[RMDB]
RNA sequence: GGGAACGACUCGAGUAGAGUCGAAAAGGGGCGAACCGACGGGAGUUCAAUGGUAAAGAGGCGAAGAACCUCGGAGGUUCCCUCCCAAGAAGGUUCAAGAGAAUACAAGAAAUGGAGGAAUUUCCCCGAAGGCGGAGGUUCGCCUCCGCCAAAAGAAACAACAACAACAAC
Reactivity to 2A3 in 0.01 (KOAc 150mM, MgCl2 10mM, bicine 150mM(pH8.5), 24C), signal-to-noise 3, nucleotides 027 to 129: g000g010g020g010c040g020a000a000c000c020g000a020c000g000g000g000a290g000u050u080c010a090a070u150g010g000u060a070a090a060g020a010g020g000c020g110a090a000g020a050a060c000c030u010c020g000g000a010g000g000u000u000c050c000c000u040c000c000c000a000a010g060a000a030g030g020u130u190c040a060a000g040a010g020a020a010u090a060c050a020a010g020a020a090a000u090g020g010a020g020g030a020a050u030u050u010c000c000c000c020g080a050a050
Reactivity to DMS in 0.01 (KOAc 150mM, MgCl2 10mM, bicine 150mM(pH8.5), 24C), signal-to-noise 2, nucleotides 027 to 129: g050g000g020g010c110g020a050a040c050c040g010a080c250g040g000g040a020g000u060u000c050a130a160u120g010g010u050a070a060a080g000a000g030g000c120g000a070a060g010a050a050c000c000u010c000g000g020a090g050g030u000u000c080c060c050u040c070c030c100a110a100g010a050a110g010g010u040u040c050a020a060g010a040g030a060a040u000a090c080a030a180g050a110a120a020u020g070g030a030g000g040a080a030u070u000u000c010c020c020c120g050a070a120